[RMDB]
Source: RMDB library TTRINS, as collected in RNAgym. Chemical mapping of a 177-nucleotide RNA with DMS. The RNA was probed in 150 mM KOAc, 10 mM MgCl2 and 150 mM bicine (pH 8.5) at 24 C. Reactivities are given for positions 27 through 126. For DMS, 1,701 sequencing reads were counted. DMS adducts were read by reverse transcription with MarathonRT.
RNA sequence: GGGAACGACUCGAGUAGAGUCGAAAAGAUAUGGACUGUUAUAGUAGUAUUUCGUCGUUGAAAAAUUUGGCGAAUCGGAAACGAUUCGCCAAAUUUGGAGACGAAUAUGAACUAACAGUCCUAAGUCCUUAAUGAUUGACUUCGGUCAAUCAUUAAGAAAAGAAACAACAACAACAAC
Reactivity to DMS in 0.01 (KOAc 150mM, MgCl2 10mM, bicine 150mM(pH8.5), 24C), signal-to-noise 2, nucleotides 027 to 126: g010a080u010a300u000g000g020a000c000u000g000u010u000a000u000a120g000u010a230g000u000a000u010u010u000c010g010u000c010g000u000u010g000a100a090a000a000a000u000u000u000g010g020c040g020a050a000u010c020g010g010a100a070a270c000g040a030u010u010c000g060c030c000a000a000a000u000u000u000g010g010a120g000a000c000g000a000a010u000a000u000g000a190a190c200u000a000a000c010a000g010u000c000c000u000a000a100g010u000c050